RNA sequence: GGGAACGACUCGAGUAGAGUCGAAAAUUGAGGCGGAUAAGUUGCUAAGGCGGGGCUUCCCUUAUUGUUCGGGAGCCUGAGCGAUACGCUCUUGCUUGCUCGUAAGAAUUCGAGGCUAGUUGGCCAAAACUCCCGGGACAUUCGUGUUUUGGGAGUUAAAAGAAACAACAACAACAAC
Reactivity to DMS in 0.01 (KOAc 150mM, MgCl2 10mM, bicine 150mM(pH8.5), 24C), signal-to-noise 9, nucleotides 027 to 126: u030u020g010a100g000g010c030g000g010a070u010a050a090g010u020u010g010c050u010a090a120g000g020c030g000g000g000g000c020u010u010c020c000c020u010u030a080u020u030g010u020u010c180g000g000g000a050g010c010c020u000g000a040g010c010g010a130u030a080c140g010c000u000c020u010u000g010c030u000u010g000c020u000c020g000u020a070a090g010a080a110u020u010c060g000a090g000g000c040u000a070g010u010u010g000g000c020c030a050a050
Reactivity to 2A3 in 0.01 (KOAc 150mM, MgCl2 10mM, bicine 150mM(pH8.5), 24C), signal-to-noise 6, nucleotides 027 to 126: u130u140g040a040g020g030c030g020g010a030u050a140a060g050u090u050g030c040u060a050a090g040g010c030g000g020g000g010c010u110u130c010c000c000u050u110a220u100u200g120u080u130c040g010g000g010a010g010c000c010u010g010a010g000c010g040a060u070a200c090g000c000u000c000u010u040g010c010u020u060g020c010u000c030g020u040a070a030g060a100a090u130u100c060g020a030g030g000c010u020a030g070u050u090g040g010c010c000a030a050
Chemical mapping of a 177-nucleotide RNA with DMS and 2A3. The RNA was probed in 150 mM KOAc, 10 mM MgCl2 and 150 mM bicine (pH 8.5) at 24 C. For DMS, 68,074 sequencing reads were counted.